[RMDB]
This 177-nucleotide RNA was probed chemically with DMS and 2A3. The RNA was probed in 150 mM KOAc, 10 mM MgCl2 and 150 mM bicine (pH 8.5) at 24 C. For 2A3, 73,446 sequencing reads were counted. The DMS profile rests on 49,098 reads. Source: RMDB library OK1LIB, as collected in RNAgym. Reactivities are given for positions 27 through 126.
RNA sequence: GGGAACGACUCGAGUAGAGUCGAAAAAUGCGAUAAGGCAAACGCGCGACAGCGUGAAACGCGAUCCCCGCCCAAAUAACGCGUUUGCCAAAAGAACAAUAAACAUUAAGGGCGGGGUAACAAUGAACGCUAUGGCAAUCUUCGGGUUGUUAUAGUGAAAAGAAACAACAACAACAAC
Reactivity to DMS in 0.01 (KOAc 150mM, MgCl2 10mM, bicine 150mM(pH8.5), 24C), signal-to-noise 9, nucleotides 027 to 126: a080u020g010c120g010a110u030a100a110g010g000c010a000a000a010c010g010c000g020c260g020a110c210a100g010c010g020u020g000a050a080a160c040g020c030g000a120u020c010c010c000c010g020c000c000c000a070a090a080u040a140a140c020g000c000g000u000u000u010g000c010c000a020a030a080a090g010a120a120c190a080a070u030a080a080a110c160a060u030u020a110a100g000g010g020c000g000g000g000g000u010a010a020c100a060a090u020g000a090a110
Reactivity to 2A3 in 0.01 (KOAc 150mM, MgCl2 10mM, bicine 150mM(pH8.5), 24C), signal-to-noise 9, nucleotides 027 to 126: a000u210g030c070g070a100u090a240a110g000g000c010a000a010a000c000g020c000g020c050g110a060c070a060g000c020g030u080g100a140a120a010c030g010c010g020a090u110c000c000c000c000g010c000c000c010a100a210a090u210a110a020c020g000c010g010u010u010u010g000c010c000a030a050a020a020g030a020a010c050a040a050u270a160a090a020c100a130u170u210a090a120g000g000g000c000g000g000g000g000u010a030a010c030a030a100u200g080a100a010